[RMDB]
RNA sequence: GGGAACGACUCGAGUAGAGUCGAAAACUCGGUGGAGGCCUCAGUGGUGCCGCUGUAGUGUGGGGUGUUAGCGGCCAAACGCCCCACUGGGAUCGCACCCCCCGGCGAUCCCCGCGCGGAGGCGGGAGGAUCGCUGGAGAUGCUGCGGCGCGCAACGGCUAUAUAAGCCGUUCGCGGCUUAUAUAGCAAAAGAAACAACAACAACAAC
Reactivity to 2A3 in 0.01 (KOAc 150mM, MgCl2 10mM, bicine 150mM(pH8.5), 24C), signal-to-noise 1, nucleotides 027 to 156: c010u030c040g000g040u090g030g080a060g030g050c010c030u090c110a040g050u080g070g050u030g000c020c020g000c010u020g020u060a060g020u030g030u030g070g000g020g000u020g000u050u070a030g030c040g010g000c010c000a030a100a020c000g000c000c000c000c000a000c000u000g000g010g000a050u170c090g010c040a180c000c000c000c000c000c020g000g000c000g000a000u020c000c010c000c000g030c010g030c070g100g170a080g110g100c000g020g010g010a080g090g000a000u010c000g000c000u000g020g010a060g000a050u170g010c030u000g000c000g000g010c010g010c000g000c030a070a030c020g060
Chemical mapping of a 207-nucleotide RNA with 2A3. The RNA was probed in 150 mM KOAc, 10 mM MgCl2 and 150 mM bicine (pH 8.5) at 24 C. For 2A3, 1,214 sequencing reads were counted.